[RMDB]
RNA sequence: GGGAACGACUCGAGUAGAGUCGAAAAAUACAACAGCAGUAGGACUCAGCGACCGUCACAACAAGGUUGUGCUGGUAUCCGACGGUCGUAUAGCCCUGUCUUGCAGGUUGCCUUGCACUGACGUGCCACACCAUUUACAGAUUCGUCUGUAAAUGAAGGAUAUAUAGAGGUUCGCCUCUAUAUAUCCAAAAGAAACAACAACAACAAC
Reactivity to DMS in 0.01 (KOAc 150mM, MgCl2 10mM, bicine 150mM(pH8.5), 24C), signal-to-noise 2, nucleotides 027 to 156: a150u010a090c030a050a070c020a140g020c020a050g000u000a030g000g030a040c010u000c160a190g020c000g000a020c000c010g000u000c000a190c050a080a080c090a060a090g010g030u000u010g040u010g030c020u000g000g010u000a070u000c080c030g020a050c010g020g020u000c010g030u000a070u010a050g010c000c010c010u000g000u000c040u000u000g010c020a130g010g010u000u020g000c020c110u010u000g010c010a070c050u000g020a150c180g000u000g000c000c060a090c060a120c140c000a010u000u000u000a010c000a020g000a080u000u010c300g010u000c010u000g010u010a000a000a010u000g000a100a120
Reactivity to 2A3 in 0.01 (KOAc 150mM, MgCl2 10mM, bicine 150mM(pH8.5), 24C), signal-to-noise 8, nucleotides 027 to 156: a010u170a020c030a030a000c000a020g020c000a000g010u050a020g000g030a020c010u050c110a030g010c000g000a000c010c000g020u030c010a040c030a120a090c040a150a090g130g020u080u050g060u090g070c070u100g060g060u080a100u060c050c050g000a000c010g000g000u000c010g010u070a070u090a090g000c000c000c000u030g060u090c050u060u170g000c020a030g110g000u030u040g040c020c020u020u100g000c010a010c030u150g090a050c090g010u010g010c010c020a100c010a020c030c010a000u010u000u000a000c000a000g010a020u020u110c110g100u010c100u000g000u000a000a000a010u010g010a030a040